[RMDB]
RNA sequence: GGGAACGACUCGAGUAGAGUCGAAAAUCAUCCAAGUUCGCUUGGAUGAAACGGUACUGAAGCUAAAAACGAUCCGAGGCAACACUACCAUAAAAGGAUCGACAGCCUGCAAAUUCGUUUGCAGGAAGAUCACUCCACAGUUCGCUGUGGAGUGAUCAAAAGAAACAACAACAACAAC
Reactivity to DMS in 0.01 (KOAc 150mM, MgCl2 10mM, bicine 150mM(pH8.5), 24C), signal-to-noise 2, nucleotides 027 to 126: u000c000a000u000c000c000a000a010g000u000u030c300g010c000u010u000g000g030a000u010g000a000a080a150c190g010g000u000a070c160u000g020a150a240g000c020u000a030a130a070a110a150c010g020a010u030c020c000g000a060g000g010c060a040a100c060a100c140u030a080c020c010a080u020a100a040a110a140g000g000a020u000c010g040a200c220a130g010c000c000u000g000c000a060a020a010u010u000c240g020u000u010u000g000c050a000g010g000a030a030
Reactivity to 2A3 in 0.01 (KOAc 150mM, MgCl2 10mM, bicine 150mM(pH8.5), 24C), signal-to-noise 2, nucleotides 027 to 126: u020c000a010u000c000c010a000a000g010u010u120c230g020c090u010u000g010g010a010u000g000a010a030a000c060g030g010u100a120c060u110g080a140a010g070c040u080a140a040a010a040a100c020g000a010u000c000c010g030a040g020g020c000a130a020c040a050c130u110a040c010c010a010u130a080a110a000a030g020g000a020u010c000g020a020c030a000g010c000c000u000g000c010a020a030a050u080u090c170g030u040u000u000g000c000a000g000g000a000a010